[RMDB]
RNA sequence: GGGAACGACUCGAGUAGAGUCGAAAAGCAACGCAAAGCCGCGGCAACUGGAGUUAGCGAGAAGAGACUAGGCUUUGGUUUCUUCAAGUGAAGCGGUCACCAAUCAGGUGUGGUAGUUACCGUAAAAAUAACCGCUCUUUGUUCGCAAAGAGCGGAACAGUAAUAGGCAGUUCGCUGCCUAUUACUGAAAAGAAACAACAACAACAAC
Reactivity to DMS in 0.01 (KOAc 150mM, MgCl2 10mM, bicine 150mM(pH8.5), 24C), signal-to-noise 2, nucleotides 027 to 156: g010c020a050a090c050g050c050a060a080a130g020c020c030g030c070g000g010c030a080a090c000u030g000g020a130g020u000u000a230g000c010g010a300g000a100a060g020a050g010a040c000u000a110g050g060c070u000u020u000g010g020u000u000u000c010u000u010c000a060a300g010u010g000a070a230g020c000g040g020u000c020a050c010c020a080a090u010c070a060g030g000u000g020u000g020g020u000a050g020u000u000a040c030c030g010u000a010a050a050a080a090u020a100a190c000c000g010c000u000c000u010u010u000g010u010u020c240g030c000a010a020a020g010a020g010c000g000g020a000a020
Reactivity to 2A3 in 0.01 (KOAc 150mM, MgCl2 10mM, bicine 150mM(pH8.5), 24C), signal-to-noise 5, nucleotides 027 to 156: g020c030a040a050c070g020c060a090a030a000g030c010c010g030c020g040g010c030a070a050c040u090g040g020a070g060u140u100a040g090c040g030a040g010a100a000g020a000g000a010c020u050a040g060g150c000u120u100u090g010g010u000u010u010c000u010u010c030a070a030g030u030g040a060a010g000c000g000g010u020c010a010c010c010a040a130u180c060a050g040g040u060g020u060g100g030u040a060g020u070u050a030c010c010g030u060a060a060a030a040a010u120a080a080c000c010g000c010u000c000u000u000u000g020u030u060c100g000c100a000a000a000g000a000g000c000g000g000a000a000

Structure probing data (DMS and 2A3) for a 207-nucleotide construct. The RNA was probed in 150 mM KOAc, 10 mM MgCl2 and 150 mM bicine (pH 8.5) at 24 C. DMS adducts were read by reverse transcription with MarathonRT. 2A3 adducts were read by reverse transcription with SuperScript II with manganese. Reactivities are rounded to 0.1 and cut off at 0 and 3. Reactivities are given for positions 27 through 156.